[RMDB]
Overview:
Chemical mapping of a 177-nucleotide RNA with DMS and 2A3. It was measured as part of the RMDB library TTRDEL. 2A3 adducts were read by reverse transcription with SuperScript II with manganese.
RNA sequence: GGGAACGACUCGAGUAGAGUCGAAAAGAUAUGGACCAGGUAUUGGACGAGGAUCUCGGAAACGAGGGAGUCCGGUACUGGUCCUAAGUCAAAGUGCCUAGGUAUCGUUCGCGAUACCUAGGCACAACGUUUAGUGAGGGUUCGCCCUCACUAAACGAAAAGAAACAACAACAACAAC
Reactivity to DMS in 0.01 (KOAc 150mM, MgCl2 10mM, bicine 150mM(pH8.5), 24C), signal-to-noise 2, nucleotides 027 to 126: g000a060u010a300u000g000g000a000c000c000a020g020g000u010a000u000u000g010g000a010c000g020a110g000g010a040u010c000u000c000g000g010a090a100a230c040g000a030g000g000g000a040g010u010c000c000g020g010u000a000c000u000g000g020u000c000c010u000a020a050g010u010c030a060a120a090g000u010g010c000c000u000a000g010g010u000a010u000c000g010u010u000c220g030c030g010a000u000a000c000c000u000a000g000g000c000a000c000a000a000
Reactivity to 2A3 in 0.01 (KOAc 150mM, MgCl2 10mM, bicine 150mM(pH8.5), 24C), signal-to-noise 2, nucleotides 027 to 126: g010a030u080a030u160g000g000a010c000c010a000g300g060u110a020u010u000g010g000a010c040g070a280g040g030a020u010c000u000c000g020g040a150a110a090c010g000a000g000g030g010a000g000u010c010c030g010g000u000a000c000u000g010g010u040c000c010u000a040a010g020u020c040a110a020a110g000u030g030c020c000u010a000g000g000u000a010u020c020g050u050u170c300g010c000g220a000u010a020c000c000u000a000g010g030c000a000c020a000a010